[RMDB]
RNA sequence: GGGAACGACUCGAGUAGAGUCGAAAAGUUAUCAGGUUAAUGUGGUGGGUGAGCAAGCACGAGUCGAAGAAGUGAAGAAUGUUAGCGCCGUGAACAGUGGUAGCCCGGAAGUGGUGGAACUGAUUGCAUAUUAGUGCACUUUCGAGUGCACUAAUAUAAAAGAAACAACAACAACAAC
Reactivity to DMS in 0.01 (KOAc 150mM, MgCl2 10mM, bicine 150mM(pH8.5), 24C), signal-to-noise 7, nucleotides 027 to 126: g010u000u010a060u000c050a070g010g000u000u000a060a070u010g020u000g000g020u010g010g010g010u010g000a100g020c080a080a100g020c070a090c050g000a080g020u000c050g010a080a080g000a080a100g010u010g000a090a080g000a070a080u000g000u010u010a100g010c070g020c030c040g000u000g000a040a060c090a070g020u000g010g000u010a100g000c040c040c040g020g010a070a090g020u000g020g010u000g010g010a060a070c070u000g010a110u000u000g000c190
Reactivity to 2A3 in 0.01 (KOAc 150mM, MgCl2 10mM, bicine 150mM(pH8.5), 24C), signal-to-noise 2, nucleotides 027 to 126: g060u080u070a050u130c020a000g080g090u070u120a120a020u120g050u060g080g070u080g010g060g020u030g010a060g050c020a070a000g010c000a010c060g060a030g030u110c080g010a070a040g020a040a000g080u080g070a060a060g070a100a070u070g030u060u060a020g020c000g010c040c040g040u030g010a050a010c000a030g020u000g060g020u040a030g000c020c010c000g030g040a090a030g050u070g000g000u030g010g080a070a010c020u000g030a080u040u150g030c010